Record summary: An RNA of 207 nucleotides, treated with 2A3 and read out base by base. The reactions ran in a buffer of 150 mM KOAc, 10 mM MgCl2 and 150 mM bicine (pH 8.5), at 24 C. For 2A3 the reverse transcriptase was SuperScript II with manganese. It was measured as part of the RMDB library M2RFPK. Values cover nucleotides 27 to 156.

[RMDB]
RNA sequence: GGGAACGACUCGAGUAGAGUCGAAAAUCAUGUCAGUAAGCAUGCCGGGGAAUCGUGGUUUACCCCGUUAUCAAAUGAUUACCGACCAAUAAUUGGCGAAACUCGUUUCGCGUUGGCUGCCUAAUUCGUUACCGCUGACCCUUCGGGGUCAGCGGAAGUACUCAGUGAUGUUCGCAUCACUGAGUACAAAAGAAACAACAACAACAAC
Reactivity to 2A3 in 0.01 (KOAc 150mM, MgCl2 10mM, bicine 150mM(pH8.5), 24C), signal-to-noise 1, nucleotides 027 to 156: u050c040a030u150g010u000c020a000g050u070a070a050g000c000a000u020g080c040c000g000g000g010g030a020a140u130c130g040u150g190g080u110u050u250a160c000c000c010c000g030u010u010a090u040c040a040a100a130u050g030a010u030u030a010c010c040g020a030c010c020a030a010u050a140a060u150u120g030g000c020g000a010a040a060c050u020c040g020u000u000u040c000g050c040g030u040u060g050g060c090u110g020c020c000u120a130a140u040u130c060g060u110u190a060c000c000g000c000u000g000a000c010c030c010u020u050c200g070g000g000g000u020c000a010g030c000g000g000a000a000